Description: An RNA of 177 nucleotides, treated with 2A3 and DMS and read out base by base. Source: RMDB library OK1LIB, as collected in RNAgym. For DMS the reverse transcriptase was MarathonRT. The reactions ran in a buffer of 150 mM KOAc, 10 mM MgCl2 and 150 mM bicine (pH 8.5), at 24 C. Reactivities are given for positions 27 through 126. For 2A3 the reverse transcriptase was SuperScript II with manganese.

[RMDB]
RNA sequence: GGGAACGACUCGAGUAGAGUCGAAAACGUGUUAAGUCUUCUCGUCUAUUUGCGACAGAUAGGGCGUAGUUAGGAUGUGAUUGUCGUCUAGAUAUGUCAGGACAGGAACUCCUUGGCGGGUGGCACGCCAUGCUGGUAGAUUCGUCUACCAGCAUGGAAAAGAAACAACAACAACAAC
Reactivity to 2A3 in 0.01 (KOAc 150mM, MgCl2 10mM, bicine 150mM(pH8.5), 24C), signal-to-noise 4, nucleotides 027 to 126: c020g020u030g000u030u060a040a040g020u000c010u050u020c010u000c000g040u000c030u060a130u050u110u080g010c020g030a020c020a040g100a060u080a090g050g040g000c030g010u020a020g010u010u020a030g000g020a020u050g000u010g000a020u010u020g020u020c030g010u000c030u020a050g020a070u100a050u110g070u030c050a010g040g000a010c010a010g010g020a020a030c020u030c020c000u010u040g030g000c020g010g010g020u030g040g000c020a000c040g020
Reactivity to DMS in 0.01 (KOAc 150mM, MgCl2 10mM, bicine 150mM(pH8.5), 24C), signal-to-noise 5, nucleotides 027 to 126: c080g020u020g010u000u010a030a080g030u010c040u010u020c040u000c060g000u010c030u010a080u010u020u020g020c060g000a080c090a080g010a090u020a040g000g000g000c030g020u000a070g030u030u010a070g000g010a020u000g000u010g000a160u030u010g010u000c020g010u030c020u030a090g000a100u030a050u020g020u010c070a090g000g010a030c010a040g000g020a140a060c070u000c030c040u000u010g000g000c030g010g000g030u000g000g010c080a040c110g010